Chemical mapping of a 177-nucleotide RNA with DMS and 2A3.
The 2A3 profile rests on 1,335 reads.
The reactions ran in a buffer of 150 mM KOAc, 10 mM MgCl2 and 150 mM bicine (pH 8.5), at 24 C.
For 2A3 the reverse transcriptase was SuperScript II with manganese.

RNA sequence: GGGAACGACUCGAGUAGAGUCGAAAAGUACCUGGUCGGUUCCGGUAGUGAUGACGACGCCAGUUCCGUCAUCAAAAGGCUGGCGGCGAAGAUAUUGGCCAUAGAAUGGCCGUUGCGCUGAACGGUAACUGCUCAUAUCGUUCGCGAUAUGAGCAGUAAAAGAAACAACAACAACAAC
Reactivity to DMS in 0.01 (KOAc 150mM, MgCl2 10mM, bicine 150mM(pH8.5), 24C), signal-to-noise 3, nucleotides 027 to 126: g010u000a070c040c030u020g020g020u000c040g000g010u000u000c030c000g010g000u010a080g050u000g000a050u000g010a100c030g020a080c100g020c080c120a100g000u010u010c100c020g000u010c090a040u010c100a040a080a100a100g010g010c020u000g000g020c040g000g020c030g000a080a090g030a120u000a100u000u010g020g000c020c030a080u010a140g000a060a300u000g000g010c000c000g010u000u000g000c050g000c050u020g030a050a050c060g010g010u000a110
Reactivity to 2A3 in 0.01 (KOAc 150mM, MgCl2 10mM, bicine 150mM(pH8.5), 24C), signal-to-noise 2, nucleotides 027 to 126: g010u020a060c000c050u060g020g020u060c010g010g000u060u050c020c030g050g050u130a090g090u030g060a070u050g030a000c010g000a000c050g010c020c020a020g050u160u130c020c000g020u040c040a130u040c020a060a080a000a000g050g000c000u010g000g010c080g010g030c010g030a110a030g060a080u120a030u140u270g040g000c000c020a020u020a030g300a200a180u070g000g030c000c000g000u000u070g040c050g020c020u050g060a070a020c010g000g020u030a030